[RMDB]
RNA sequence: GGGAACGACUCGAGUAGAGUCGAAAAGAUAUGGAGAGCGUAAGAGCUGAUGACCAAUCAUGGAGAAUUUGUAUCGGAAACGAUACUCAGGAUCCAUGAUUGCAAGGCUCUUGAUCUCUCCUAAGUCCGAAACUCAUUACUUCGGUAAUGAGUUUCGAAAAGAAACAACAACAACAAC
Reactivity to DMS in 0.01 (KOAc 150mM, MgCl2 10mM, bicine 150mM(pH8.5), 24C), signal-to-noise 1, nucleotides 027 to 126: g010a110u000a300u000g000g000a010g010a010g010c300g030u000a000a000g000a000g020c000u010g000a120u000g010a290c300c000a020a030u000c030a010u000g000g100a010g000a300a160u000u000u000g000u040a000u040c020g000g040a100a010a130c080g020a000u000a000c000u000c040a010g000g020a300u020c000c000a000u000g000a010u000u000g000c000a050a110g010g010c000u000c000u000u010g000a090u000c000u000c000u010c010c000u000a000a090g000u000c080